[RMDB]
RNA sequence: GGGAACGACUCGAGUAGAGUCGAAAAGCUUCACUAUGGACGAGGUGGACUCACUGCUUUCCAGAUACGCAGAGAAAGCCCUGGACUUUCCAUACCCUCAGAGGGAGAAACGAUCAGGUAACUGCUAGCAUCCUAGAAGGGGAUUCUACAUGGAGGACAUAUGCUUCCUUUUCGAAGGAAGCAUAUGAAAAGAAACAACAACAACAAC
Reactivity to DMS in 0.01 (KOAc 150mM, MgCl2 10mM, bicine 150mM(pH8.5), 24C), signal-to-noise 3, nucleotides 027 to 156: g010c070u000u000c020a100c060u010a080u010g010g020a080c070g030a090g010g010u000g000g000a130c030u010c060a170c080u000g030c010u000u020u010c030c030a180g010a160u000a090c080g000c030a000g000a170g000a060a050a130g020c060c010c020u000g010g000a100c040u010u000u000c010c010a130u000a200c020c010c010u000c100a180g000a110g010g050g010a100g000a040a070a070c030g020a210u010c030a000g020g010u000a100a110c040u000g030c030u000a070g000c080a130u000c030c040u000a090g000a070a060g030g020g000g000a090u000u000c020u000a050c070a080u010g010g010a090g030g050a280
Reactivity to 2A3 in 0.01 (KOAc 150mM, MgCl2 10mM, bicine 150mM(pH8.5), 24C), signal-to-noise 6, nucleotides 027 to 156: g020c030u050u070c040a040c060u070a090u150g040g040a040c040g020a070g050g010u050g030g020a030c010u020c050a070c040u060g020c000u080u040u060c020c020a000g020a120u150a070c070g000c040a000g020a010g040a140a030a020g010c040c010c020u020g010g040a060c020u040u040u000c020c030a070u070a160c000c010c000u050c080a070g070a110g090g010g010a040g030a010a050a020c070g030a050u090c020a000g010g010u050a090a040c010u020g010c010u030a030g000c000a020u040c010c010u030a050g080a110a050g030g000g030g000a010u070u040c020u070a060c030a110u080g040g020a030g060g010a010